[RMDB]
RNA sequence: GGGAACGACUCGAGUAGAGUCGAAAAGCCAUUGACAACCUCGCCGUGCUCAUGCGAGCAGAGACUGGAAGCAGGCCUUAUAAGGCAGCGGCAGCCCAACUGCCGGAGACCCUAGAGACCAUUAUGCGUUGGUAUUAUAAUUCGUUAUAAUACCAACAAAAGAAACAACAACAACAAC
Reactivity to 2A3 in 0.01 (KOAc 150mM, MgCl2 10mM, bicine 150mM(pH8.5), 24C), signal-to-noise 8, nucleotides 027 to 126: g020c010c010a060u030u130g050a060c040a040a060c030c020u020c030g010c020c020g100u060g010c020u030c040a090u230g070c090g050a020g000c020a010g040a000g020a050c060u070g020g020a040a030g030c070a040g040g040c000c000u250u210a220u040a160a050g030g000c020a020g060c020g020g000c000a020g020c000c040c000a040a100c010u010g000c000c000g010g010a040g030a040c000c000c000u050a040g010a010g030a130c020c030a100u180u190a090u270g050c050
Reactivity to DMS in 0.01 (KOAc 150mM, MgCl2 10mM, bicine 150mM(pH8.5), 24C), signal-to-noise 9, nucleotides 027 to 126: g010c020c020a100u000u010g010a120c090a080a120c070c030u000c070g020c050c060g020u000g010c040u000c060a120u010g010c120g010a040g010c030a070g010a090g010a080c060u010g000g010a100a090g000c070a080g010g000c020c010u000u000a080u010a100a100g010g000c020a150g010c020g010g010c020a040g000c030c040c070a080a160c030u000g000c010c010g010g000a100g010a130c030c010c010u000a070g000a090g010a080c040c030a080u000u000a070u000g010c210
Overview:
An RNA of 177 nucleotides, treated with 2A3 and DMS and read out base by base. DMS adducts were read by reverse transcription with MarathonRT. The reactions ran in a buffer of 150 mM KOAc, 10 mM MgCl2 and 150 mM bicine (pH 8.5), at 24 C. The 2A3 profile rests on 18,920 reads.